[RMDB]
RNA sequence: GGGAACGACUCGAGUAGAGUCGAAAACAUGUGAGCUCCCAGCCUCCCCCCCGAUAUGAGGAGCCAGAACGGCGUCGGUCACGGCAUAAGGCAUGCCCAUUGUUAUCUGGGCGCUUGUCAUUACCACCUGUAAGAUGUGGUUCGCCACAUCUUACAGAAAAGAAACAACAACAACAAC
Reactivity to DMS in 0.01 (KOAc 150mM, MgCl2 10mM, bicine 150mM(pH8.5), 24C), signal-to-noise 4, nucleotides 027 to 126: c170a100u010g010u010g010a060g010c020u000c010c000c020a100g010c030c030u000c000c010c010c010c010c000c020g020a090u050a070u020g000a100g040g000a120g020c020c030a110g000a110a110c160g000g010c050g000u000c030g000g000u000c050a080c110g000g000c040a050u020a070a100g010g010c050a070u060g000c000c020c000a030u030u000g000u020u040a040u040c130u010g000g000g000c020g000c070u000u000g020u010c020a050u020u010a190c040c010a110c170
Reactivity to 2A3 in 0.01 (KOAc 150mM, MgCl2 10mM, bicine 150mM(pH8.5), 24C), signal-to-noise 7, nucleotides 027 to 126: c060a040u140g080u050g080a030g020c020u010c010c010c000a020g020c010c030u030c010c000c010c000c000c000c010g050a040u050a110u220g090a110g090g020a020g020c000c010a050g050a120a040c060g030g020c020g030u040c060g030g020u040c030a020c090g020g040c020a060u070a110a080g070g020c020a020u090g020c000c000c010a050u050u120g150u140u160a110u140c050u030g010g010g000c000g020c020u050u040g030u030c020a030u030u090a080c010c010a050c000